RNA sequence: GGGAACGACUCGAGUAGAGUCGAAAAGAUAUGGACUCGCUGGUGAGCAACAGCUCGGAAACGAGACAUGCUCCCAGUCGAGUCCUAAGUCAAAAGUUAAGGAGAAACUUCGGUUUCUCCUUAACAAGUUACAAGGCAGGUUCGCCUGCCUUGUAACAAAAGAAACAACAACAACAAC
Reactivity to DMS in 0.01 (KOAc 150mM, MgCl2 10mM, bicine 150mM(pH8.5), 24C), signal-to-noise 2, nucleotides 027 to 126: g000a050u010a300u010g000g000a010c000u000c010g010c000u000g000g000u020g000a000g030c010a040a060c260a170g000c000u000c000g000g010a100a090a220c000g000a000g000a060c100a250u000g020c000u000c000c000c000a010g010u000c010g000a000g010u010c000c000u000a000a130g010u000c040a040a070a090a150g020u000u000a010a000g020g020a020g000a020a010a020c000u000u010c200g010g000u000u000u000c000u010c000c000u000u000a000a000c000a060a070